Chemical mapping of a 207-nucleotide RNA with 2A3. For 2A3, 766 sequencing reads were counted.
RNA sequence: GGGAACGACUCGAGUAGAGUCGAAAAAAGACGGAUCGGUCAUCGCGGUGACUCUGAACAACUUCUCGGCCCACGCCGAUGCGGUCGAUCUGUUCUAUCAGAUCGCGUACCUGCUGGACCCCGAGUCCACCGGUCACCGGGACUGGAUCUUCCGUCCCAUGGUGGCCGUGUUCGCACGGCCACCAUGAAAAGAAACAACAACAACAAC
Reactivity to 2A3 in 0.01 (KOAc 150mM, MgCl2 10mM, bicine 150mM(pH8.5), 24C), signal-to-noise 1, nucleotides 027 to 156: a000a020g040a010c010g020g000a030u110c130g000g070u020c010a000u040c050g100c020g260g010u010g010a020c040u000c070u150g130a230a120c110a110a030c090u140u040c000u010c000g020g000c020c010c000a020c110g000c000c000g050a040u030g000c010g130g120u220c000g000a000u000c010u030g020u080u170c090u180a230u220c000a000g000a020u020c000g000c000g010u010a000c000c010u040g000c010u000g010g010a020c000c000c000c080g000a000g020u020c030c070a000c000c080g000g000u000c000a000c000c000g020g050g000a010c110u090g070g000a000u010c000u000u020c010c000g030u010c020c020

Conditions: 150 mM KOAc, 10 mM MgCl2 and 150 mM bicine (pH 8.5), 24 C.